[RMDB]
RNA sequence: GGGAACGACUCGAGUAGAGUCGAAAAUGAGAAGCAUUCGUGCUUCUCAGAAAUGCUGCCCAAACAGGACCUGGGGGUGUCUGGGCUGCUAAACUCAUCAGCUAACCGCGAUCUUCGGAUCGCGGAAACAGUUAAUAAGAUUCGUCUUAUUAACUGUAAAAGAAACAACAACAACAAC
Reactivity to DMS in 0.01 (KOAc 150mM, MgCl2 10mM, bicine 150mM(pH8.5), 24C), signal-to-noise 6, nucleotides 027 to 126: u000g000a010g010a010a000g020c000a030u000u010c210g020u000g010c000u000u000c000u010c000a020g000a080a080a100u000g000c030u000g000c010c000c010a030a040a030c030a040g000g000a120c060c040u000g010g020g010g010g020u000g010u000c040u000g000g000g010c010u000g010c020u000a050a090a110c060u010c050a090u010c160a110g000c160u020a100a190c020c010g000c000g000a010u000c000u000u020c220g010g010a010u000c000g000c010g010g000a010a030
Reactivity to 2A3 in 0.01 (KOAc 150mM, MgCl2 10mM, bicine 150mM(pH8.5), 24C), signal-to-noise 2, nucleotides 027 to 126: u030g000a000g000a000a010g000c010a020u080u120c200g070u030g000c000u010u000c000u000c000a000g010a000a060a020u120g000c010u030g010c000c000c000a030a110a030c090a060g140g110a150c010c090u200g020g000g000g060g000u030g000u000c020u020g000g010g000c010u000g000c000u020a020a030a040c040u040c040a130u040c050a100g060c060u060a070a060c000c000g000c000g000a010u000c010u030u010c080g100g010a010u010c020g000c030g000g020a000a000

Source: RMDB library M2PK50, as collected in RNAgym. The record gives the reactivity of an RNA of 177 nucleotides to DMS and 2A3. High 2A3 reactivity points to a flexible backbone, as in loops and unpaired stretches. DMS adducts were read by reverse transcription with MarathonRT. Conditions: 150 mM KOAc, 10 mM MgCl2 and 150 mM bicine (pH 8.5), 24 C.